[RMDB]
RNA sequence: GGGAACGACUCGAGUAGAGUCGAAAACCGAAUGGUCGAGUAGCACUCAGAGGGAGGAAUCCACACGGAGUAGAGCAGAGAAAUCACCUCCAGAGGACCCCUUCAGCGAACAGAGAGCGCUGCGAGCUUAGGGGCUACUUCGGUAGCCCCAAAAGAAACAACAACAACAAC
Reactivity to 2A3 in 0.01 (KOAc 150mM, MgCl2 10mM, bicine 150mM(pH8.5), 24C), signal-to-noise 2, nucleotides 027 to 129: c020c040g020a030a110u120g000g070u140c000g020a070g030u080a040g010c060a000c030u050c000a020g000a020g040g010g000a060g030g000a100a130u000c040c000a040c020a040c080g020g050a000g000u170a040g040a040g040c120a050g000a020g080a050a010a050u040c020a000c030c000u030c000c000a010g040a090g010g040a030c000c000c000c000u020u050c040a010g050c000g040a010a030c000a050g080a000g000a000g010c000g000c000u000g030c030g000a000g010c010u040u090a030
Reactivity to DMS in 0.01 (KOAc 150mM, MgCl2 10mM, bicine 150mM(pH8.5), 24C), signal-to-noise 2, nucleotides 027 to 129: c020c000g000a040a100u000g000g020u000c010g000a110g030u030a080g000c030a190c030u000c090a140g000a090g000g120g000a030g030g040a140a170u000c000c010a110c150a180c030g030g060a050g000u070a070g000a190g000c010a110g000a140g000a030a000a000u010c100a090c000c000u020c040c020a080g050a000g010g000a020c140c000c000c040u010u010c090a090g010c040g040a090a050c090a030g010a090g000a140g020c110g020c060u050g000c110g030a160g010c060u000u010a100
This 170-nucleotide RNA was probed chemically with 2A3 and DMS. Source: RMDB library 15KLIB, as collected in RNAgym. The 2A3 profile rests on 2,482 reads. For 2A3 the reverse transcriptase was SuperScript II with manganese. For DMS the reverse transcriptase was MarathonRT.